[RMDB]
RNA sequence: GGGAACGACUCGAGUAGAGUCGAAAAUUAGCACCAUGCCGCGCCAUCGCCACAGGCAUGAAGGGGUCCACGCUGCAAGGGCAAGCCACGCAGCCUGCCACAAAAGCCGCUGCAGGCGAUGCUUCAAGCUAAAUCGUACGUUCGCGUACGAUUUAGCAAAAGAAACAACAACAACAAC
Reactivity to 2A3 in 0.01 (KOAc 150mM, MgCl2 10mM, bicine 150mM(pH8.5), 24C), signal-to-noise 1, nucleotides 027 to 126: u040u020a030g000c000a020c060c000a030u070g020c010c020g130c050g020c030c010a080u020c030g000c020c000a050c000a060g020g000c020a010u050g040a070a050g000g040g000g010u090c020c010a030c070g010c010u010g020c040a070a130g000g010g050c060a070a000g160c010c000a060c040g020c000a000g000c000c000u040g030c030c000a090c020a060a070a020a060g040c000c030g070c090u090g010c010a040g000g020c010g000a010u020g010c000u030u110c080a110a020
Reactivity to DMS in 0.01 (KOAc 150mM, MgCl2 10mM, bicine 150mM(pH8.5), 24C), signal-to-noise 2, nucleotides 027 to 126: u000u010a040g020c030a170c010c030a090u010g020c020c040g010c080g000c090c020a040u000c030g030c000c030a080c110a120g000g030c040a070u000g020a160a130g020g000g000g020u000c120c070a040c110g030c030u000g020c050a040a190g010g000g010c060a080a110g000c000c010a050c230g030c020a020g020c010c030u000g010c010c030a080c080a040a040a120a080g000c050c270g030c030u010g050c090a170g000g030c010g000a070u000g010c050u000u000c100a080a200

This 177-nucleotide RNA was probed chemically with 2A3 and DMS. For 2A3, 1,608 sequencing reads were counted. The data come from the RNA Mapping Database (RMDB), library OK2TST. The DMS profile rests on 1,199 reads. Conditions: 150 mM KOAc, 10 mM MgCl2 and 150 mM bicine (pH 8.5), 24 C. Values cover nucleotides 27 to 126.